[RMDB]
RNA sequence: GGGAACGACUCGAGUAGAGUCGAAAAGGAACCGUAAGGAAGGACGCUACAAGAAUCCCCGCUUUUCUAUGCCGUGGAUCCAGCGACUCCCCAAGGAUGCCAAAAACCUGAGAGAAGAAGUAGUGAGGACUGUCGUCAUUUUCGAAUGACGACAGUCAAAAGAAACAACAACAACAAC
Reactivity to 2A3 in 0.01 (KOAc 150mM, MgCl2 10mM, bicine 150mM(pH8.5), 24C), signal-to-noise 2, nucleotides 027 to 126: g000g000a010a000c000c000g040u070a030a010g000g010a150a000g030g010a090c000g000c000u020a020c100a120a020g010a040a110u020c020c000c000c000g020c020u160u160u070u020c030u140a080u210g130c160c020g000u040g000g000a000u020c060c040a000g010c030g010a000c000u000c000c000c000c000a000a000g010g000a030u130g010c000c000a100a030a000a000a080c020c030u080g000a020g060a030g010a230a060g000a050a000g050u190a020g070u110g080a040g070
Reactivity to DMS in 0.01 (KOAc 150mM, MgCl2 10mM, bicine 150mM(pH8.5), 24C), signal-to-noise 2, nucleotides 027 to 126: g020g000a010a060c000c040g000u000a290a220g000g030a100a050g070g000a150c040g020c020u000a020c130a070a070g040a090a110u000c030c000c010c290g000c010u090u070u030u000c180u120a060u000g000c190c020g030u060g000g000a000u010c070c210a060g000c000g000a080c000u000c060c000c010c000a180a110g000g050a070u120g020c000c000a040a030a010a040a300c000c000u000g000a150g000a110g000a020a070g000a080a010g010u000a020g000u000g010a040g010
This 177-nucleotide RNA was probed chemically with 2A3 and DMS. As a SHAPE reagent, 2A3 marks flexible, mostly unpaired nucleotides at the ribose 2'-OH. The 2A3 profile rests on 711 reads. For DMS, 1,337 sequencing reads were counted.